Description
The record gives the reactivity of an RNA of 177 nucleotides to 2A3 and DMS. The reactions ran in a buffer of 150 mM KOAc, 10 mM MgCl2 and 150 mM bicine (pH 8.5), at 24 C. It was measured as part of the RMDB library OK2TRN. For DMS, 4,471 sequencing reads were counted.
[RMDB]
RNA sequence: GGGAACGACUCGAGUAGAGUCGAAAAUCUGUCUGGGCCAGUGUAGGGAUACUCACCUGGGGUCAGCUGGACAACACCAAGACUAUUGACGCUGGCUUUGUGGUCCAAGGGGAGCGGGAGGUCAGUCUCGAGAAGGGAUAUUCGUAUCCCUUCUCGAAAAAGAAACAACAACAACAAC
Reactivity to 2A3 in 0.01 (KOAc 150mM, MgCl2 10mM, bicine 150mM(pH8.5), 24C), signal-to-noise 3, nucleotides 027 to 126: u030c020u040g100u040c020u040g010g040g010c030c000a060g020u030g060u180a120g020g000g060a080u070a190c040u060c060a070c000c030u010g020g000g000g080u030c010a020g050c030u090g020g020a030c010a110a030c020a080c010c050a100a000g080a060c050u100a120u180u160g030a050c050g000c040u000g000g000c040u070u040u060g150u050g010g050u040c010c000a060a080g030g020g000g000a040g030c060g020g000g010a040g000g010u050c020a010g050u020c020
Reactivity to DMS in 0.01 (KOAc 150mM, MgCl2 10mM, bicine 150mM(pH8.5), 24C), signal-to-noise 4, nucleotides 027 to 126: u010c020u010g010u000c030u000g000g000g020c030c040a060g020u010g020u000a060g000g010g000a140u010a100c100u000c120a110c040c030u020g000g000g010g000u000c040a050g000c060u000g020g010a080c070a070a070c090a110c080c050a080a100g010a090c120u000a170u010u010g020a100c110g030c050u010g000g000c050u010u000u010g020u010g020g000u000c040c030a090a090g000g000g000g000a070g010c080g000g000g000a060g010g030u010c060a060g000u000c110